[RMDB]
RNA sequence: GGGAACGACUCGAGUAGAGUCGAAAAAAAGAUAUGGACGAAGCAAGUCGCAAUGUGAGCUUUGAUCAAAUCUCGGAAACGAGAUUUGGGAGCUCAUGACGAUGAUGACCUUCGUCCUAAGUCAAAACAUUUAACUAGAGUUCGCUCUAGUUAAAUGAAAAGAAACAACAACAACAAC
Reactivity to DMS in 0.01 (KOAc 150mM, MgCl2 10mM, bicine 150mM(pH8.5), 24C), signal-to-noise 7, nucleotides 027 to 126: a070a060a080g010a040u010a300u000g000g000a000c010g010a020a000g010c040a060a280g010u000c010g020c100a120a170u020g030u010g010a010g020c000u000u000u000g000a110u020c000a000a000a000u000c000u000c000g010g000a070a060a160c010g000a000g000a010u000u000u000g000g010g000a020g010c000u000c000a010u000g000a070c190g000a050u000g010a070u000g000a300c300c010u000u000c000g010u000c000c000u000a010a090g000u010c040a100a060a090a170
Reactivity to 2A3 in 0.01 (KOAc 150mM, MgCl2 10mM, bicine 150mM(pH8.5), 24C), signal-to-noise 5, nucleotides 027 to 126: a000a010a010g060a010u070a040u140g000g000a000c000g010a000a000g000c050a090a170g030u010c010g010c080a090a130u290g000u000g010a010g010c020u270u300u160g080a060u230c000a000a020a000u000c000u010c010g000g040a060a070a050c000g000a000g000a020u010u000u000g000g010g010a000g000c000u000c010a000u040g040a020c050g070a120u150g050a130u130g040a040c010c020u000u010c010g000u010c000c000u000a010a010g040u000c020a020a050a070a110
Record summary
Structure probing data (DMS and 2A3) for a 177-nucleotide construct. The RNA was probed in 150 mM KOAc, 10 mM MgCl2 and 150 mM bicine (pH 8.5) at 24 C. For DMS the reverse transcriptase was MarathonRT. It was measured as part of the RMDB library TTRDES.